[RMDB]
RNA sequence: GGGAACGACUCGAGUAGAGUCGAAAAACUUAAAUCCUCAUUCCGCUCAACUCUUCGAUUGUAGACGACUAUCAAUAAACUGGGUGCUGUAAGCUUCCGAGUAGCGUUCAGUUACGAGGGGUUGAGGCCCUGUGCAUUUGUUCGCAAAUGCACAGGGAAAAGAAACAACAACAACAAC
Reactivity to 2A3 in 0.01 (KOAc 150mM, MgCl2 10mM, bicine 150mM(pH8.5), 24C), signal-to-noise 1, nucleotides 027 to 126: a000c070u060u080a010a110a120u040c000c010u150c030a070u160u050c050c070g090c030u070c020a000a000c000u000c000u000u020c020g040a050u000u100g030u030a060g010a170c100g250a210c060u120a030u190c070a130a070u050a120a070a080c040u010g040g000g040u040g000c000u030g060u020a050a080g000c020u120u070c050c080g070a000g040u100a000g030c000g010u020u000c010a020g000u000u060a010c010g000a000g000g020g030g000u000u000g010a020g000g000